[RMDB]
The record gives the reactivity of an RNA of 177 nucleotides to 2A3 and DMS. For 2A3 the reverse transcriptase was SuperScript II with manganese.

RNA sequence: GGGAACGACUCGAGUAGAGUCGAAAAGAAGUAGUCUUAACCGUGUGGAAAAGAAUGGCUAUAACCACAAAAACCUGAGGAAACAGGAAGACUACUUACAAGCCAUGUAGAUAGCAUACGGAAUAAACGCUAUAAAUCGCUUCGGCGAUUUAUAGCGAAAAGAAACAACAACAACAAC
Reactivity to 2A3 in 0.01 (KOAc 150mM, MgCl2 10mM, bicine 150mM(pH8.5), 24C), signal-to-noise 2, nucleotides 027 to 126: g040a000a000g020u010a000g000u000c000u000u090a020a030c010c000g040u000g000u000g000g030a010a000a030a080g220a080a060u000g000g000c000u020a020u030a300a030c020c020a050c060a080a010a020a040a060c000c010u030g050a080g030g220a200a010a080c010a080g000g000a010a000g000a000c000u000a000c000u000u050a090c060a000a010g000c000c000a020u030g050u090a120g060a070u090a100g010c000a000u070a060c000g030g020a110a000u160a080a040a000
Reactivity to DMS in 0.01 (KOAc 150mM, MgCl2 10mM, bicine 150mM(pH8.5), 24C), signal-to-noise 1, nucleotides 027 to 126: g000a000a000g000u010a020g000u010c090u020u040a300a050c000c110g040u000g000u000g030g000a170a040a110a160g060a120a000u000g000g000c000u000a070u000a120a230c070c140a120c220a120a030a060a000a190c020c000u060g000a070g000g000a220a130a090c000a030g040g000a060a000g110a000c000u000a010c040u000u000a130c110a020a040g000c020c000a000u000g010u000a070g000a140u000a080g000c020a000u000a000c000g040g000a240a080u040a060a040a070
The RNA was probed in 150 mM KOAc, 10 mM MgCl2 and 150 mM bicine (pH 8.5) at 24 C.